RNA sequence: GGGAACGACUCGAGUAGAGUCGAAAACCUCUCGAGAAUCGGCAAAUGGGCCCCUCGCUCGUAUCUCCGAGAGGAGACGAGAAGGAGGCGGAUCUCCCUUUGCCAUCCGAGGGGACUGCGUCCUCCUGUGCGCUGGCCUUCGGGCCAGCGAAAAGAAACAACAACAACAAC
Reactivity to 2A3 in 0.01 (KOAc 150mM, MgCl2 10mM, bicine 150mM(pH8.5), 24C), signal-to-noise 6, nucleotides 027 to 129: c000c010u010c000u000c000g300a300g000a160a180u170c110g000g000c000a000a030a180u190g010g010g030c000c000c000c010u000c010g030c000u000c000g030u060a120u040c010u000c000c010g020a020g010a030g070g000a000g000a000c010g000a000g010a050a120g230g000a000g000g020c180g010g000a020u030c060u140c030c040c000u000u000u000g000c010c010a000u000c000c010g000a000g010g000g000g010a010c020u120g000c030g060u060c000c000u050c010c040u100g050u070g050
Reactivity to DMS in 0.01 (KOAc 150mM, MgCl2 10mM, bicine 150mM(pH8.5), 24C), signal-to-noise 1, nucleotides 027 to 129: c070c000u030c000u030c000g010a190g040a110a010u060c140g000g030c020a000a000a000u120g000g010g000c000c000c000c000u020c010g010c000u050c010g000u060a130u030c000u030c000c020g080a280g050a300g020g030a030g000a000c050g030a050g010a000a170g100g010a000g000g030c000g050g000a260u020c130u060c050c000c030u000u000u000g060c050c010a020u000c040c010g000a040g010g060g060g000a050c000u050g030c090g020u000c030c000u040c000c000u050g030u060g030